[RMDB]
RNA sequence: GGGAACGACUCGAGUAGAGUCGAAAAUGAAGCAAGAACUCCUUCUCUCAGCUUUAACACUGGGGACUGAGUUCGAGGUCACGGACCAGGGUCAAUCAGCACGAUUGCGGGAGUGGAAUAGAUAUUACAUGGAGUGGGGAUUCGUCCCCACUCCAUGAAAAGAAACAACAACAACAAC
Reactivity to DMS in 0.01 (KOAc 150mM, MgCl2 10mM, bicine 150mM(pH8.5), 24C), signal-to-noise 2, nucleotides 027 to 126: u000g020a110a140g000c130a140a280g000a000a020c010u000c000c010u000u010c030u020c000u000c000a030g010c020u020u010u000a160a180c300a130c000u010g010g000g010g010a030c010u020g010a080g010u000u000c030g000a120g010g000u000c050a030c050g000g030a150c020c020a120g000g000g020u000c030a000a040u000c020a110g000c170a070c210g000a130u000u000g010c170g000g000g000a070g050u000g020g000a050a040u000a030g000a040u000a040u000u000a210
Structure probing data (DMS) for a 177-nucleotide construct. The DMS profile rests on 1,028 reads. It was measured as part of the RMDB library OK2TST. High DMS reactivity at an A or C suggests that its Watson-Crick edge is free.